[RMDB]
RNA sequence: GGGAACGACUCGAGUAGAGUCGAAAAGAGUAAAUAGAGGAGUCAGGGUUCGCACCCGCUCCGCGAACCUAGGGUAACACUGACUCUGGAGCGGAAGAGAGAGCAGACGAAGAUACGUCUGCAUAGACGCGUAGUAUCGGUUCGCCGAUACUACGCGAAAAGAAACAACAACAACAAC
Reactivity to DMS in 0.01 (KOAc 150mM, MgCl2 10mM, bicine 150mM(pH8.5), 24C), signal-to-noise 1, nucleotides 027 to 126: g000a040g000u000a090a030a070u040a110g000a080g000g040a060g070u030c000a130g000g000g000u000u000c000g000c050a000c180c000c000g070c030u070c010c130g020c000g030a000a040c040c030u000a130g000g000g000u000a010a110c090a130c120u000g000a060c000u000c110u000g000g000a110g000c000g000g000a300a070g000a130g000a010g070a100g000c140a000g050a040c010g000a070a150g040a070u000a030c030g000u000c000u010g000c040a010u030a030g000a130
Reactivity to 2A3 in 0.01 (KOAc 150mM, MgCl2 10mM, bicine 150mM(pH8.5), 24C), signal-to-noise 2, nucleotides 027 to 126: g060a040g110u130a030a020a130u190a030g090a090g110g000a050g050u060c060a060g010g000g000u000u000c000g000c020a050c000c010c000g000c000u000c000c000g010c000g000a010a000c000c000u010a000g090g090g160u210a110a060c060a030c090u090g000a000c020u040c040u080g000g020a000g000c000g000g060a080a010g030a010g030a000g030a020g010c000a000g000a000c000g080a190a020g090a190u230a200c050g060u000c000u000g000c000a000u030a010g040a000
Chemical mapping of a 177-nucleotide RNA with DMS and 2A3.
The reactions ran in a buffer of 150 mM KOAc, 10 mM MgCl2 and 150 mM bicine (pH 8.5), at 24 C.
The DMS profile rests on 1,286 reads.
Source: RMDB library OK1LIB, as collected in RNAgym.